[RMDB]
About this RNA
Chemical mapping of a 207-nucleotide RNA with DMS and 2A3. As a SHAPE reagent, 2A3 marks flexible, mostly unpaired nucleotides at the ribose 2'-OH. For DMS the reverse transcriptase was MarathonRT. The 2A3 profile rests on 1,801 reads. Conditions: 150 mM KOAc, 10 mM MgCl2 and 150 mM bicine (pH 8.5), 24 C.
RNA sequence: GGGAACGACUCGAGUAGAGUCGAAAAUUAUCGAGUGGUGUCUACGUUUGGUGUGGAAUAUGACCCUGACACCAUGCAGUUCCAUUGGGAUCGCUUCCGCACUUUUGCUCGACUAGACAAAAAGACAGAUGAAAGCCUUACCAAGUACUUCCAUGGAACUAAAUAGUCCGUUCGCGGACUAUUUAGUAAAAGAAACAACAACAACAAC
Reactivity to DMS in 0.01 (KOAc 150mM, MgCl2 10mM, bicine 150mM(pH8.5), 24C), signal-to-noise 2, nucleotides 027 to 156: u010u020a060u010c030g010a110g030u000g010g000u000g000u000c010u000a090c120g010u000u000u000g000g050u000g010u020g000g000a120a100u000a100u020g000a090c060c010c030u010g010a090c040a080c010c020a060u010g000c020a110g020u000u010c010c010a300u010u020g010g000g020a030u000c040g030c060u000u020c020c000g010c050a150c010u010u000u000u000g000c040u000c020g010a120c100u010a140g010a070c020a020a050a040a110a070g030a120c030a110g010a170u000g010a030a060a070g010c010c040u000u020a100c060c020a040a100g000u010a080c040u000u000c000c020a080u000g010g000a100
Reactivity to 2A3 in 0.01 (KOAc 150mM, MgCl2 10mM, bicine 150mM(pH8.5), 24C), signal-to-noise 3, nucleotides 027 to 156: u140u080a070u140c030g010a020g020u020g010g010u010g030u040c020u080a120c140g030u080u120u150g080g000u030g010u030g000g090a040a060u130a140u200g040a030c000c000c020u050g010a000c000a020c000c020a010u030g010c020a000g010u010u040c030c010a040u070u110g030g010g020a080u070c020g000c080u030u010c010c000g030c010a000c000u020u070u060u050g020c030u010c040g050a110c080u050a040g010a040c050a030a070a000a010a060g050a030c050a050g050a040u060g050a110a050a020g010c010c000u040u020a050c030c040a050a010g010u020a070c030u080u000c010c000a040u060g050g000a020

Overview: For DMS, 3,290 sequencing reads were counted.